[RMDB]
RNA sequence: GGGAACGACUCGAGUAGAGUCGAAAAAACCCGCUUUAUUCACUGGGGUCGACAACUCUGGGGAGAGAAGGGAGGAUCGGAUGGGAAGAGUAUAUCCUAUGGGAAUCCCUGGUUUCCCCUCACGUCCGGAGAUUAUCAUGUUCGCAUGAUAAUCUCCAAAAGAAACAACAACAACAAC
Reactivity to DMS in 0.01 (KOAc 150mM, MgCl2 10mM, bicine 150mM(pH8.5), 24C), signal-to-noise 2, nucleotides 027 to 126: a130a030c020c000c010g020c160u000u000u000a050u000u000c090a070c130u020g010g000g000g010u000c030g030a100c090a090a120c110u010c090u010g040g030g000g020a060g000a040g020a250a010g000g000g010a060g010g000a300u020c040g020g010a050u000g000g000g000a030a060g000a170g000u020a060u020a040u010c000c010u000a020u030g000g020g000a300a120u000c000c000c020u000g000g000u000u000u000c000c000c000c000u010c050a000c120g000u000c170c140
Reactivity to 2A3 in 0.01 (KOAc 150mM, MgCl2 10mM, bicine 150mM(pH8.5), 24C), signal-to-noise 2, nucleotides 027 to 126: a010a000c100c010c000g010c090u210u210u100a300u130u230c070a050c140u090g060g010g000g000u070c010g050a010c010a140a040c010u080c100u070g010g010g000g010a020g010a000g020a020a000g010g040g010a010g000g060a020u060c040g010g020a100u160g050g050g030a050a010g140a060g300u090a060u030a050u120c000c000u010a050u070g040g030g000a040a020u010c000c020c000u000g040g000u000u020u000c030c000c030c000u000c020a020c010g050u000c030c060